This 207-nucleotide RNA was probed chemically with DMS and 2A3. The 2A3 profile rests on 1,030 reads. For 2A3 the reverse transcriptase was SuperScript II with manganese. Source: RMDB library OK3TST, as collected in RNAgym. DMS (dimethyl sulfate) methylates the pairing face of unpaired adenines and cytosines. The DMS profile rests on 2,631 reads.
[RMDB]
RNA sequence: GGGAACGACUCGAGUAGAGUCGAAAAAUGAUAGACAGGCGGCGAGGGUCAGGACGCCUUAGCACUCUUUUUGGUAUUUCUUCGUCGGAGCUAUCCUCGAGAUCUGUAGAAUCCCCGUCAACACCAUCCUUUCGUUUGGGGAUACCGCGAACAGGACUGCAUGUAUAGCAUUCGUGCUAUACAUGCAAAAAGAAACAACAACAACAAC
Reactivity to DMS in 0.01 (KOAc 150mM, MgCl2 10mM, bicine 150mM(pH8.5), 24C), signal-to-noise 1, nucleotides 027 to 156: a080u040g000a090u000a040g020a190c010a060g010g040c040g040g000c070g040a040g030g010g020u010c090a090g020g020a060c080g020c050c010u000u010a100g010c050a080c040u020c000u000u000u000u000u070g010g000u000a070u000u010u000c010u020u000c070g020u020c070g060g020a120g020c070u000a070u010c030c000u010c040g000a140g000a080u010c010u010g030u020a190g010a100a140u000c000c010c000c050g000u000c040a060a080c030a020c030c030a070u000c030c020u000u000u000c040g010u000u000u030g020g010g010g010a160u000a010c050c030g000c020g020a040a050c070a050g020g000a090c060
Reactivity to 2A3 in 0.01 (KOAc 150mM, MgCl2 10mM, bicine 150mM(pH8.5), 24C), signal-to-noise 2, nucleotides 027 to 156: a010u070g020a020u040a040g080a070c020a040g020g140c040g000g000c040g010a030g000g000g030u030c050a010g010g120a020c050g000c010c050u010u070a050g000c030a080c050u090c090u000u070u080u140u140g040g000u110a090u100u170u030c070u060u050c000g040u010c020g030g000a010g020c040u030a020u110c000c000u020c010g040a060g000a200u010c050u040g020u040a050g050a060a060u010c000c000c000c000g090u080c080a050a040c010a030c090c040a050u080c020c010u030u140u020c030g090u030u170u180g010g000g000g040a030u100a120c020c000g000c010g000a020a020c120a090g050g010a010c020